[RMDB]
RNA sequence: GGGAACGACUCGAGUAGAGUCGAAAAGAUAUGGACCUAAAGGCUAGGUCGUAAUCGGAAACGAUUACAGACCUUGGACCCUUCAGGUCCUAAGUCAAAAGUAGGCUGUAGUUCGCUACAGCCUACAUCAUGAACCAGUCUUCGGACUGGUUCAUGAAAAAGAAACAACAACAACAAC
Reactivity to DMS in 0.01 (KOAc 150mM, MgCl2 10mM, bicine 150mM(pH8.5), 24C), signal-to-noise 2, nucleotides 027 to 126: g000a000u000a000u020g000g000a020c000c000u000a030a030a020g020g000c010u000a010g040g040u000c010g030u000a000a000u010c000g010g000a000a000a010c000g010a000u000u000a010c010a100g000a020c010c000u010u020g040g000a000c300c000c000u000u000c060a010g010g000u000c010c000u000a000a050g000u000c010a070a080a160a140g000u000a000g000g010c000u000g020u010a010g010u000u030c180g040c000u000a000c000a000g000c000c000u000a010c000a040